RNA sequence: GGGAACGACUCGAGUAGAGUCGAAAAUGGACGGACGGGUGUGGCCCAAAGAGGACGAGAAGCAAGUCAAGCUGCUCUUUGCCUUCAUCCACCACUGCACAGGAGUGCGUCUGAAAGCCUGGUUUGCUCCUCGCUGCAUAUUCGUAUGCAGCGAGGAAAAAGAAACAACAACAACAAC
Reactivity to DMS in 0.01 (KOAc 150mM, MgCl2 10mM, bicine 150mM(pH8.5), 24C), signal-to-noise 1, nucleotides 027 to 126: u010g000g000a080c040g020g000a050c040g030g020g000u010g030u000g010g000c030c050c030a010a150a160g010a130g020g010a030c070g000a000g000a070a110g010c040a040a070g020u000c300a150a230g010c260u000g000c050u000c030u000u000u000g000c000c040u010u000c080a110u000c050c040a090c120c100a020c070u000g010c100a100c020a120g020g040a100g020u000g020c040g000u020c050u000g010a130a080a050g000c030c000u000g000g000u000u020u000g000c150